Chemical mapping of a 177-nucleotide RNA with 2A3 and DMS. The data come from the RNA Mapping Database (RMDB), library OK2TRN. Values are in units of 0.01, from 0 to 300, in steps of 10. Reactivities are given for positions 27 through 126.
RNA sequence: GGGAACGACUCGAGUAGAGUCGAAAAUGGAAUGAAUAACAUGUGCUUUUGCUCCUUGCAUGGCGAUGCCACCAUGCGCUCUCGGGCUCUUUUGUUUUUGCUCCUCCUGCUUUUGCCUAUGCUGCCCCACUGGGGCUGUAUUCGUACAGCCCCAGUGAAAAGAAACAACAACAACAAC
Reactivity to 2A3 in 0.01 (KOAc 150mM, MgCl2 10mM, bicine 150mM(pH8.5), 24C), signal-to-noise 3, nucleotides 027 to 126: u110g030g030a090a060u110g020a090a100u210a070a020c040a070u150g060u050g080c030u090u120u090u160g040c020u010c030c000u070u120g010c030a030u040g020g020c030g160a110u160g060c010c020a030c010c000a030u030g010c010g020c030u000c010u030c040g040g040g030c090u030c070u150u110u100u150g060u040u090u050u100u170g030c020u010c010c000u020c010c000u040g040c030u090u060u060u070g020c010c020u030a040u150g060c020u050g000c000c000c000
Reactivity to DMS in 0.01 (KOAc 150mM, MgCl2 10mM, bicine 150mM(pH8.5), 24C), signal-to-noise 3, nucleotides 027 to 126: u010g010g010a090a080u010g020a140a090u000a080a110c090a050u000g010u010g020c040u010u000u000u000g010c040u010c030c060u000u010g000c030a030u000g010g020c050g000a080u000g000c080c030a140c030c020a040u000g000c020g010c070u000c060u000c100g010g010g020c060u010c040u000u000u000u000g000u000u000u010u000u000g000c050u000c030c020u000c040c030u010g010c020u010u000u000u000g000c020c030u000a070u000g030c030u000g000c020c010c020